[RMDB]
RNA sequence: GGGAACGACUCGAGUAGAGUCGAAAAUUUCUAAUUUUUGUGUUCUUUUCCUAAAGCUGUUUUCCCAAACGAGUUGCGAUCCCUUUGAAAUGGAAAACCCAUAUGCAGGAGAUGUAAACUUGUUACAGAUUAGCAUACUGUUCGCAGUAUGCUAAUCAAAAGAAACAACAACAACAAC
Reactivity to 2A3 in 0.01 (KOAc 150mM, MgCl2 10mM, bicine 150mM(pH8.5), 24C), signal-to-noise 3, nucleotides 027 to 126: u030u030u000c020u040a120a190u040u070u070u080u070g040u020g060u030u070c020u060u000u060u100c030c020u080a120a070a030g030c030u010g110u070u040u020u070c020c000c000a050a040a000c010g010a010g040u020u010g010c030g090a040u020c020c010c020u090u140u070g080a070a080a000u000g000g050a040a050a090a040c000c000c000a010u030a020u170g030c010a010g010g040a170g010a040u040g050u030a060a090a070c000u020u030g010u020u050a030c020a060
Reactivity to DMS in 0.01 (KOAc 150mM, MgCl2 10mM, bicine 150mM(pH8.5), 24C), signal-to-noise 4, nucleotides 027 to 126: u000u010u000c070u030a050a100u000u000u010u000u000g030u000g010u010u000c020u000u000u000u010c010c040u010a070a080a100g010c020u000g010u000u000u000u000c000c000c030a090a050a050c030g010a020g010u000u000g030c170g020a060u010c020c010c020u000u000u010g010a060a060a020u010g010g000a110a120a120a170c260c010c020a030u010a040u010g020c030a060g000g010a060g020a040u010g010u000a120a060a050c030u000u010g000u000u000a100c200a130
The data come from the RNA Mapping Database (RMDB), library OK2TST. Structure probing data (2A3 and DMS) for a 177-nucleotide construct. 2A3 adducts were read by reverse transcription with SuperScript II with manganese. For 2A3, 2,120 sequencing reads were counted. Conditions: 150 mM KOAc, 10 mM MgCl2 and 150 mM bicine (pH 8.5), 24 C.